[RMDB]
Chemical mapping of a 207-nucleotide RNA with 2A3.
For 2A3, 377 sequencing reads were counted.
Values are in units of 0.01, from 0 to 300, in steps of 10.
It was measured as part of the RMDB library M2RFPK.

RNA sequence: GGGAACGACUCGAGUAGAGUCGAAAAACAGUUCCUACUUAUCCGGUUUUAACGCUGUUUUAUUGGCGCAAAGGUUGACGGAUAAACAACUAAUAAUUAAACCUUUUGUGUGCGAAACGUGGUUGUUAUAAUACCGAGCGUUUCGACGCUCGGUAAACUAUUCCAUGCGUUUCGACGCAUGGAAUAGAAAAGAAACAACAACAACAAC
Reactivity to 2A3 in 0.01 (KOAc 150mM, MgCl2 10mM, bicine 150mM(pH8.5), 24C), signal-to-noise 1, nucleotides 027 to 156: a000c020a000g000u020u010c000c000u000a040c020u030u020a030u000c040c070g080g000u000u010u070u170a100a010c030g020c060u040g160u040u130u150u290a130u040u270g040g000c010g010c110a040a030a030g030g050u000u000g000a040c030g010g000a000u050a040a110a000c040a040a040c040u150a020a070u100a150a060u190u120a090a000a040c050c000u050u050u080u020g110u000g080u060g000c120g030a110a090a020c030g020u110g020g000u030u010g000u000u050a040u030a300a150u000a040c000c020g000a000g000c000g000u020u040u180c180g000a010c000g010c000u020c000g000g040u000a010a010a010